This 177-nucleotide RNA was probed chemically with DMS and 2A3. High DMS reactivity at an A or C suggests that its Watson-Crick edge is free. For 2A3, 977 sequencing reads were counted. For 2A3 the reverse transcriptase was SuperScript II with manganese. The reactions ran in a buffer of 150 mM KOAc, 10 mM MgCl2 and 150 mM bicine (pH 8.5), at 24 C. Reactivities are given for positions 27 through 126. DMS adducts were read by reverse transcription with MarathonRT.
RNA sequence: GGGAACGACUCGAGUAGAGUCGAAAAUGAUCGGCGGUUUGCGAAAUACCAGCAGCAAGGUCGCCUGGAAGCAAGAUACAUGCUGCAGCCGGAGGCCCAAAGGUUGAUUCAAACUGCCAUCAGGAAAGACGAGCCGGUAAUUCGUUACCGGCUCGUCAAAAGAAACAACAACAACAAC
Reactivity to DMS in 0.01 (KOAc 150mM, MgCl2 10mM, bicine 150mM(pH8.5), 24C), signal-to-noise 1, nucleotides 027 to 126: u060g040a000u000c140g100g010c010g100g020u000u010u000g000c300g060a070a080a300u070a000c060c070a200g050c150a040g000c300a060a080g000g020u000c000g000c120c000u040g000g010a070a000g000c000a000a040g030a070u000a210c300a010u110g000c170u010g000c090a180g030c010c000g020g000a120g000g000c000c000c080a000a230a000g010g010u000u000g000a300u100u000c030a000a040a000c000u070g000c000c000a000u000c000a030g000g060a030a020a100
Reactivity to 2A3 in 0.01 (KOAc 150mM, MgCl2 10mM, bicine 150mM(pH8.5), 24C), signal-to-noise 1, nucleotides 027 to 126: u070g000a000u040c100g020g000c000g030g010u000u000u020g050c060g060a130a030a000u070a060c000c020a000g170c040a000g040c000a020a300g010g000u000c000g010c010c000u010g070g030a000a000g000c040a040a010g080a190u160a140c050a060u240g070c070u050g050c000a020g060c000c040g000g000a000g020g000c000c000c000a000a120a000g000g000u000u000g000a070u050u050c010a010a000a000c000u000g060c020c000a000u000c000a000g020g060a040a060a020